[RMDB]
RNA sequence: GGGAACGACUCGAGUAGAGUCGAAAAAAAAGAUAUGGAGCUAGACGCUCUUUGAUCGUAUACUGAAUUUACAUCGGAAACGAUGUAUUAGUCAGUAUACGGGAGAGCGCUAGCUCCUAAGUCAAAAGAUUCAAAGUUUGUUCGCAAACUUUGAAUCAAAAGAAACAACAACAACAAC
Reactivity to DMS in 0.01 (KOAc 150mM, MgCl2 10mM, bicine 150mM(pH8.5), 24C), signal-to-noise 1, nucleotides 027 to 126: a070a060a090a060g000a000u000a280u020g000g010a030g010c020u000a000g010a160c010g020c000u000c000u000u000u020g000a070u010c000g010u000a000u010a000c000u000g020a140a040u000u010u000a000c000a000u000c000g000g010a090a030a080c000g010a010u000g000u000a000u020u010a100g000u020c000a020g000u000a000u000a000c010g020g010g000a030g010a010g000c010g000c000u000a010g030c000u010c000c000u000a010a040g000u010c010a150a090a120a190

Chemical mapping of a 177-nucleotide RNA with DMS. For DMS the reverse transcriptase was MarathonRT. The data come from the RNA Mapping Database (RMDB), library TTRDES. The reactions ran in a buffer of 150 mM KOAc, 10 mM MgCl2 and 150 mM bicine (pH 8.5), at 24 C. Values are in units of 0.01, from 0 to 300, in steps of 10.